[RMDB]
RNA sequence: GGGAACGACUCGAGUAGAGUCGAAAAUAGGGCUCACCAAAGGGUUGCAUGGUCAGCAUUUUAGGGAGAUAGAACUUUGGAAGUGGAGGGAGAUAGAAAUUAAGUUUUCUAGGAGACAUCCUGAGGGCUUCCUAGGUAGAUUCGUCUACCUAGGAAGAAAAGAAACAACAACAACAAC
Reactivity to 2A3 in 0.01 (KOAc 150mM, MgCl2 10mM, bicine 150mM(pH8.5), 24C), signal-to-noise 2, nucleotides 027 to 126: u120a010g050g000g000c010u020c030a080c020c020a060a050a050g080g020g030u100u070g050c050a050u080g120g040u140c040a040g020c020a080u020u080u090u220a020g000g000g030a040g000a030u070a060g090a070a070c050u120u120u130g070g030a050a060g010u050g050g060a080g050g000g000a030g030a010u070a020g040a030a020a050u130u050a080a240g300u060u000u020u000c010u030a030g000g040a030g020a010c010a030u010c010c010u000g030a070g040g020g010
Reactivity to DMS in 0.01 (KOAc 150mM, MgCl2 10mM, bicine 150mM(pH8.5), 24C), signal-to-noise 5, nucleotides 027 to 126: u000a110g000g000g000c040u000c080a090c050c040a060a110a120g000g000g000u010u000g010c050a100u000g010g010u010c060a090g000c040a060u010u000u010u010a110g010g000g010a060g010a100u000a090g000a080a100c050u000u000u000g010g000a070a080g010u010g000g000a100g000g000g010a100g010a140u000a020g000a020a010a020u000u010a080a140g000u000u000u000u000c010u000a050g010g000a100g020a080c140a080u000c020c010u000g000a070g000g000g010